[RMDB]
An RNA of 207 nucleotides, treated with DMS and 2A3 and read out base by base. For 2A3 the reverse transcriptase was SuperScript II with manganese. Reactivities are given for positions 27 through 156. The reactions ran in a buffer of 150 mM KOAc, 10 mM MgCl2 and 150 mM bicine (pH 8.5), at 24 C. For DMS, 2,926 sequencing reads were counted.
RNA sequence: GGGAACGACUCGAGUAGAGUCGAAAACUCACUCACUACGGUGAGUGAGAAUGCUUAAGCCUCAAUAAAGCUUGGUUUGAGUGCCUCAAGCAGAUAUAGACUGAAACAUUUAGUAUGGCCAAGCAGGGAGCAACGGCUCGAGUACGCUCGAGCCGAAGGUAAUUAAUGCAUUCGUGCAUUAAUUACCAAAAGAAACAACAACAACAAC
Reactivity to DMS in 0.01 (KOAc 150mM, MgCl2 10mM, bicine 150mM(pH8.5), 24C), signal-to-noise 2, nucleotides 027 to 156: c000u010c020a000c000u000c010a010c010u010a080c300g080g000u010g000a080g000u030g000a000g010a020a040u000g020c020u000u000a040a070g030c010c000u000c030a090a090u000a140a110a130g000c010u000u000g000g020u000u020u020g020a080g020u000g010c010c010u000c040a200a070g000c010a100g020a170u020a080u010a130g000a180c020u000g020a130a050a070c070a090u010u000u000a110g010u000a090u010g060g000c010c020a040a080g000c040a090g010g010g000a040g020c020a050a190c030g000g010c010u020c000g000a030g000u000a110c300g020c030u000c000g010a050g030c000c000g000a010a000
Reactivity to 2A3 in 0.01 (KOAc 150mM, MgCl2 10mM, bicine 150mM(pH8.5), 24C), signal-to-noise 4, nucleotides 027 to 156: c000u000c000a000c000u000c000a000c000u040a040c230g100g000u000g000a000g000u000g000a000g000a000a040u060g010c000u010u040a040a010g020c000c010u020c030a060a100u100a210a100a020g030c030u010u040g040g040u010u040u110g020a010g020u120g010c020c010u050c080a050a010g000c020a000g080a030u140a030u070a070g130a040c070u070g060a070a130a000c050a040u040u120u100a100g070u050a080u110g040g000c000c000a000a000g000c020a040g030g040g000a080g050c100a100a070c020g000g010c010u000c000g000a000g000u030a040c190g010c080u000c020g000a000g000c030c000g000a000a000